[RMDB]
Record summary:
The record gives the reactivity of an RNA of 177 nucleotides to DMS. It was measured as part of the RMDB library OK2TRN.
RNA sequence: GGGAACGACUCGAGUAGAGUCGAAAAACUGCGGCGCGUGACGCGUACUGGAUCCAGAGGUACGCAUGGCCGAGAGGUACUGGCCGGCCGUACUAUGCGCCUGGUACCGGCCGUAGUACUGAUCCGCGAUCCGAGGAGUGUUCGCACUCCUCGGAUCAAAAGAAACAACAACAACAAC
Reactivity to DMS in 0.01 (KOAc 150mM, MgCl2 10mM, bicine 150mM(pH8.5), 24C), signal-to-noise 2, nucleotides 027 to 126: a070c100u010g000c000g010g000c040g040c070g010u000g020a170c220g000c040g020u010a010c010u000g000g000a080u020c140c220a120g020a300g000g000u000a000c000g020c030a110u010g010g010c030c030g000a160g010a240g000g000u010a010c020u010g020g020c140c000g000g000c080c000g030u000a030c040u000a040u010g020c110g030c080c030u000g010g020u010a040c050c100g030g000c000c010g050u010a050g000u000a020c030u010g000a140u000c010c050g010c160

DMS adducts were read by reverse transcription with MarathonRT. Reactivities are given for positions 27 through 126. The reactions ran in a buffer of 150 mM KOAc, 10 mM MgCl2 and 150 mM bicine (pH 8.5), at 24 C.